The record gives the reactivity of an RNA of 177 nucleotides to 2A3 and DMS. The data come from the RNA Mapping Database (RMDB), library OK2TRN. For DMS the reverse transcriptase was MarathonRT. The DMS profile rests on 2,464 reads. Values cover nucleotides 27 to 126.
RNA sequence: GGGAACGACUCGAGUAGAGUCGAAAACUUCUGCUUCUACGGGCUGGAAGGCUCCGGCAAGACUACGGCCAUUGCGACGGCAGCGAACAUCGCUCCCGAGGGCAGCAAGGUCCUGAUCGUCAACGCCAAUUCCAAGGGAUUUCGAUCCCUUGGAAUUAAAAGAAACAACAACAACAAC
Reactivity to 2A3 in 0.01 (KOAc 150mM, MgCl2 10mM, bicine 150mM(pH8.5), 24C), signal-to-noise 2, nucleotides 027 to 126: c010u030u000c010u020g010c000u090u060c020u200a100c070g040g000g000c060u070g000g060a040a010g010g010c010u000c010c000g000g010c010a070a050g020a020c030u020a010c050g040g000c020c000a230u030u040g020c040g030a050c000g070g010c030a010g020c040g010a090a070c060a280u190c050g020c050u020c000c010c000g020a080g050g070g030c030a060g010c040a020a000g000g030u120c000c030u070g030a140u150c140g030u010c040a070a030c130g000c010c020
Reactivity to DMS in 0.01 (KOAc 150mM, MgCl2 10mM, bicine 150mM(pH8.5), 24C), signal-to-noise 4, nucleotides 027 to 126: c080u000u000c030u000g010c040u000u000c080u010a140c170g000g010g010c050u000g020g010a090a110g010g000c080u000c030c090g050g000c040a110a180g000a050c070u010a120c290g010g010c020c030a130u010u000g000c020g010a150c060g020g010c160a030g000c020g030a150a180c240a080u000c030g020c030u000c160c010c010g010a060g010g010g020c080a090g020c150a030a060g000g010u000c000c020u000g000a120u000c170g000u020c060a070a160c180g010c060c040